[RMDB]
RNA sequence: GGGAACGACUCGAGUAGAGUCGAAAAGUCGUCGACGAAGGCAUGUGAGCUUCAACUCGAUGAAGAGCGUCAGCGGACGGCCUCUGAGACGAGCGAUGGACAGUAGAGCUCGUCUCUACCAGUCGCGGAUGCAUGCAUUGUUCGCAAUGCAUGCAUCAAAAGAAACAACAACAACAAC
Reactivity to 2A3 in 0.01 (KOAc 150mM, MgCl2 10mM, bicine 150mM(pH8.5), 24C), signal-to-noise 4, nucleotides 027 to 126: g070u010c000g000u020c000g000a040c030g020a120a040g030g010c050a100u160g110u070g160a060g030c010u050u020c030a040a040c020u030c010g140a150u220g160a090a100g000a010g000c050g030u070c070a020g010c010g060g100a020c020g000g000c000c000u000c020u030g010a010g000a010c000g000a000g040c050g040a050u060g060g070a030c040a100g110u110a020g030a000g030c020u020c120g140u050c000u010c000u000a010c040c010a030g000u010c000g000c010g040
Reactivity to DMS in 0.01 (KOAc 150mM, MgCl2 10mM, bicine 150mM(pH8.5), 24C), signal-to-noise 3, nucleotides 027 to 126: g010u000c010g030u000c020g000a300c190g000a070a020g010g010c040a060u010g100u010g010a190g000c000u000u000c220a070a140c030u010c010g010a120u010g010a100a100g000a020g010c070g000u000c140a020g020c020g010g010a040c030g000g000c010c000u000c020u010g000a290g000a010c010g010a010g010c010g000a120u010g010g010a070c080a070g000u000a010g000a270g020c010u020c160g010u010c000u000c000u000a010c030c020a050g000u000c000g010c010g000
An RNA of 177 nucleotides, treated with 2A3 and DMS and read out base by base. The reactions ran in a buffer of 150 mM KOAc, 10 mM MgCl2 and 150 mM bicine (pH 8.5), at 24 C. Values cover nucleotides 27 to 126. For DMS the reverse transcriptase was MarathonRT. Source: RMDB library VIROID, as collected in RNAgym.